[RMDB]
An RNA of 177 nucleotides, treated with DMS and 2A3 and read out base by base. High 2A3 reactivity points to a flexible backbone, as in loops and unpaired stretches. The reactions ran in a buffer of 150 mM KOAc, 10 mM MgCl2 and 150 mM bicine (pH 8.5), at 24 C. DMS adducts were read by reverse transcription with MarathonRT. For 2A3, 4,601 sequencing reads were counted.

RNA sequence: GGGAACGACUCGAGUAGAGUCGAAAAUAACAUCGUAGUGUAAGUCGAAAAGUCAACGUCGCUUGCCAGCAGGACCACCAAAGGAAUACGCUUCGGUAACUACUCGAGAUCCCAAGCGAUAACACAACAAUAAUUGAUCCUUCGGGAUCAAUUAUUGAAAAGAAACAACAACAACAAC
Reactivity to DMS in 0.01 (KOAc 150mM, MgCl2 10mM, bicine 150mM(pH8.5), 24C), signal-to-noise 4, nucleotides 027 to 126: u010a110a100c120a070u000c070g000u000a040g010u000g010u010a040a100g020u000c040g000a040a090a090a100g020u020c040a040a070c160g010u010c050g010c020u010u000g000c040c040a080g010c080a130g010g010a070c040c050a050c040c080a030a070a060g000g000a070a080u000a030c080g000c050u000u000c020g020g000u000a050a140c010u000a010c010u010c020g010a020g000a140u000c010c000c000a080a080g000c100g000a080u010a030a030c090a050c150a070a080
Reactivity to 2A3 in 0.01 (KOAc 150mM, MgCl2 10mM, bicine 150mM(pH8.5), 24C), signal-to-noise 4, nucleotides 027 to 126: u040a000a010c030a030u080c030g060u060a100g020u040g020u110a080a080g070u040c030g030a070a090a000a030g080u060c050a050a070c100g060u020c030g040c060u020u070g040c000c030a020g030c020a020g040g040a010c000c000a030c010c030a110a090a010g060g030a080a080u050a070c050g000c060u000u010c010g000g050u020a110a090c010u020a010c000u020c000g010a010g020a040u000c000c010c010a000a020g090c040g080a070u080a150a060c090a000c010a050a140